[RMDB]
RNA sequence: GGGAACGACUCGAGUAGAGUCGAAAAGGAGAUCGAAGAUGACCGACGUCAGCACGGUCUGGAUGUAGGUCCGCAUGCAUCCCAGUUGACGAAACUUAACGAUUUCCAAAGCGGACAAGAAGUCAAACGGAUGCCUAAUAUUCGUAUUAGGCAUCCGAAAAGAAACAACAACAACAAC
Reactivity to 2A3 in 0.01 (KOAc 150mM, MgCl2 10mM, bicine 150mM(pH8.5), 24C), signal-to-noise 4, nucleotides 027 to 126: g000g000a000g000a010u010c000g060a080a090g080a110u140g030a020c030c030g050a060c040g150u180c080a060g030c130a060c060g010g000u040c050u030g000g010a000u000g000u010a000g020g000u000c000c000g020c000a010u010g010c010a000u000c000c010c000a010g000u010u030g090a110c130g070a060a080a020c020u070u020a090a000c040g030a030u030u000u030c000c040a080a110a020g020c010g000g000a000c020a010a020g150a050a010g130u170c100a070a000a030
Reactivity to DMS in 0.01 (KOAc 150mM, MgCl2 10mM, bicine 150mM(pH8.5), 24C), signal-to-noise 3, nucleotides 027 to 126: g010g010a000g010a000u040c000g000a160a130g020a230u000g000a030c060c030g000a190c060g010u010c110a070g030c080a140c090g000g000u000c050u000g000g030a030u000g020u000a060g010g000u000c040c000g000c030a010u030g000c010a020u010c020c000c300a060g000u000u010g020a090c270g010a120a010a050c080u000u000a050a180c040g020a020u000u000u020c000c010a100a020a070g000c000g010g000a020c010a160a120g010a110a180g000u030c150a070a050a140